[RMDB]
RNA sequence: GGGAACGACUCGAGUAGAGUCGAAAAGAUAUGGACACCUACUCUGACCUCACUUUAAGACAGCAAACCGUUCGGAAACGAACGGCUUGCAAUGACGAAGUGAGGGUCAGAGUAGGUGUCCUAAGUCCUCUGUCCUUAAGUUCGCUUAAGGACAGAGAAAAGAAACAACAACAACAAC
Reactivity to DMS in 0.01 (KOAc 150mM, MgCl2 10mM, bicine 150mM(pH8.5), 24C), signal-to-noise 2, nucleotides 027 to 126: g010a110u010a300u010g010g000a010c000a000c000c020u000a000c000u000c000u010g030a070c000c000u010c010a020c000u000u000u000a160a190g020a210c300a140g010c000a000a010a020c000c010g020u040u010c000g000g010a180a130a250c000g000a020a020c020g010g010c000u000u000g020c010a080a070u000g000a200c300g020a010a010g030u000g000a040g010g040g020u000c010a000g000a010g030u000a000g000g010u000g000u000c010c000u000a010a060g020u000c060